[RMDB]
RNA sequence: GGGAACGACUCGAGUAGAGUCGAAAAUUAUCAGAAGGAGUAACGGACGCUGGCAUUCACCGUGUUACCCACGUUGUUCUUACCAGAUGCCGGUUUUAAGACUCCAGACCGAAGCGAAGAUUAUCACAGCUUCGCGUACAUUCGUGUACGCGAAGCUAAAAGAAACAACAACAACAAC
Reactivity to DMS in 0.01 (KOAc 150mM, MgCl2 10mM, bicine 150mM(pH8.5), 24C), signal-to-noise 1, nucleotides 027 to 126: u010u010a120u000c050a090g010a290a070g010g010a040g020u010a070a030c020g000g010a090c300g000c010u000g010g030c080a050u000u000c070a060c060c030g030u010g000u010u050a130c300c250c010a020c080g000u000u020g000u030u000c080u010u000a070c060c050a050g000a050u000g020c020c030g010g010u000u020u000u020a060a050g010a120c010u000c000c000a010g050a190c130c050g010a030a070g000c110g020a020a140g000a090u010u000a070u000c060a110c220